This 177-nucleotide RNA was probed chemically with DMS and 2A3. It was measured as part of the RMDB library OK2TRN. For DMS, 6,735 sequencing reads were counted. For 2A3, 724 sequencing reads were counted.
[RMDB]
RNA sequence: GGGAACGACUCGAGUAGAGUCGAAAAAAAUUAGAAAUUCUAGAUCCUGUCUCACAUGUUUCCCCUAUUAGGAUCUCCUUCCUAGUGUAUGCUUUCUAUAGGGUCAUAUUCUGGGAUUGCAGAAUCAUGGUAUAUACAGAUUCGUCUGUAUAUACCAAAAAGAAACAACAACAACAAC
Reactivity to DMS in 0.01 (KOAc 150mM, MgCl2 10mM, bicine 150mM(pH8.5), 24C), signal-to-noise 5, nucleotides 027 to 126: a050a060a110u020u010a080g000a120a090a090u010u000c030u010a050g010a030u000c010c010u000g010u010c090u000c100a080c150a100u000g010u000u000u000c010c010c020c180u010a090u010u000a040g010g010a010u000c020u000c020c010u000u000c010c000u000a010g010u000g020u000a010u000g000c020u000u000u010c170u020a180u010a100g000g010g000u010c020a010u000a010u000u000c000u010g000g010g010a020u000u000g010c180a060g000a050a060u010c110a120
Reactivity to 2A3 in 0.01 (KOAc 150mM, MgCl2 10mM, bicine 150mM(pH8.5), 24C), signal-to-noise 1, nucleotides 027 to 126: a000a000a000u210u060a040g050a000a190a070u300u140c130u070a060g020a070u020c020c000u050g090u050c050u020c020a120c000a080u170g060u060u080u090c000c000c000c000u070a160u220u110a090g050g000a000u000c000u010c000c000u000u020c000c000u010a000g000u000g000u000a030u000g000c010u080u170u010c070u030a170u240a230g000g020g070u100c000a000u000a000u000u010c000u000g000g000g000a010u010u030g010c010a010g010a080a080u170c110a140